[RMDB]
The record gives the reactivity of an RNA of 177 nucleotides to DMS and 2A3. The 2A3 profile rests on 1,688 reads. The data come from the RNA Mapping Database (RMDB), library OK2TST.
RNA sequence: GGGAACGACUCGAGUAGAGUCGAAAAAUUCUUAGGGACUUUCCGGUAACGUUGGAGUACCGCUCAAUGUCCCCACUGGCGUUAAUUAUGAAAGUUCCGGUCGUUGUUCCAACGGCACAGGUGCCAAGACGGAUUUAGUAUUCGUACUAAAUCCGUCAAAAGAAACAACAACAACAAC
Reactivity to DMS in 0.01 (KOAc 150mM, MgCl2 10mM, bicine 150mM(pH8.5), 24C), signal-to-noise 2, nucleotides 027 to 126: a220u000u000c020u000u000a090g040g000g010a010c010u000u000u000c040c200g010g000u000a030a010c030g020u020u000g010g000a140g010u000a050c040c080g020c080u010c110a100a080u010g010u000c010c010c020c080a180c070u010g000g000c010g000u000u000a030a060u000u010a120u020g010a010a030a030g020u000u000c010c000g030g020u010c030g000u000u000g000u010u010c050c030a080a070c110g000g000c010a050c110a100g010g010u010g010c040c060a110a190
Reactivity to 2A3 in 0.01 (KOAc 150mM, MgCl2 10mM, bicine 150mM(pH8.5), 24C), signal-to-noise 2, nucleotides 027 to 126: a000u140u020c040u090u080a130g000g000g010a010c010u030u040u000c060c010g040g000u020a010a010c030g020u060u070g120g010a100g060u050a060c010c000g020c050u100c040a100a160u210g060u070c050c010c000c010a050c040u030g010g040c000g010u030u040a110a080u140u100a100u290g020a070a000a000g010u030u000c010c000g000g000u020c000g030u000u000g060u140u020c070c030a030a000c000g030g050c020a020c000a050g240g000u070g020c020c000a030a020